[RMDB]
An RNA of 177 nucleotides, treated with DMS and read out base by base. The DMS profile rests on 1,098 reads.
RNA sequence: GGGAACGACUCGAGUAGAGUCGAAAAAGUCUGGAGCUCGAUAAAGUCGGCGGAAGUUUGUCGUAACAGCGUGGCAACACGGCUGACGAAAGUGCAGUAGAGGUACUGUAUGCAGAUGACACAUAAAAAGUCUCCAACUGUUCGCAGUUGGAGACUUAAAAGAAACAACAACAACAAC
Reactivity to DMS in 0.01 (KOAc 150mM, MgCl2 10mM, bicine 150mM(pH8.5), 24C), signal-to-noise 1, nucleotides 027 to 126: a010g020u000c030u070g020g000a050g040c000u000c020g000a150u000a130a030a090g000u000c020g010g060c120g000g020a120a290g000u000u020u020g000u000c000g020u000a170a000c000a080g000c070g020u000g000g040c300a000a080c000a000c020g010g000c010u000g000a260c070g020a000a060a060g050u000g000c020a000g000u000a000g000a140g000g000u060a000c000u100g000u000a060u020g000c070a020g000a040u000g000a080c220a090c030a070u020a020a090a050